Description:
Conditions: 150 mM KOAc, 10 mM MgCl2 and 150 mM bicine (pH 8.5), 24 C. This 207-nucleotide RNA was probed chemically with 2A3 and DMS. For 2A3 the reverse transcriptase was SuperScript II with manganese. The 2A3 profile rests on 12,336 reads.
[RMDB]
RNA sequence: GGGAACGACUCGAGUAGAGUCGAAAAUUAUGUGUACAACCCCUUCUUAGUCGACGUGGCGACGUGGGGUUUCUCGGGACGUCUCUCCACUAACCAUGACGCGGUUUGCACAUAUCACUCUAACGCUCAUGUCGCUUCAGCAGAUGCGAUAAUGACCACGGUACAAUUUAUUCGUAAAUUGUACCGUAAAAGAAACAACAACAACAAC
Reactivity to 2A3 in 0.01 (KOAc 150mM, MgCl2 10mM, bicine 150mM(pH8.5), 24C), signal-to-noise 8, nucleotides 027 to 156: u090u010a010u010g020u000g000u010a030c090a070a020c020c000c040c030u130u060c060u140u210a140g060u170c050g020a070c010g020u010g000g000c000g010a030c060g000u000g000g000g000g000u010u010u000c050u020c000g090g050g080a050c090g010u000c000u010c000u000c020c000a000c000u010a020a010c000c000a010u040g030a030c040g010c050g020g010u000u010u010g000c010a000c000a000u010a020u040c040a080c040u050c040u080a170a050c090g030c060u010c010a010u020g010u000c000g010c000u050u050c030a140g080c080a070g050a050u060g020c000g010a010u090a170a090u150g010a010c020c040
Reactivity to DMS in 0.01 (KOAc 150mM, MgCl2 10mM, bicine 150mM(pH8.5), 24C), signal-to-noise 3, nucleotides 027 to 156: u000u010a030u010g010u000g020u010a040c100a030a030c010c000c060c030u010u010c080u010u010a150g040u000c050g020a170c070g040u000g000g000c050g010a140c140g030u000g000g000g000g000u000u000u010c010u000c030g010g020g030a230c300g000u000c010u000c030u010c010c030a060c040u000a260a020c020c010a040u000g020a110c060g000c090g020g000u000u000u020g010c000a030c030a030u000a050u010c110a070c050u010c030u010a080a080c160g010c060u000c010a040u010g020u000c010g020c010u000u000c020a200g030c200a180g020a100u010g010c010g010a060u000a050a050u000g010a080c020c030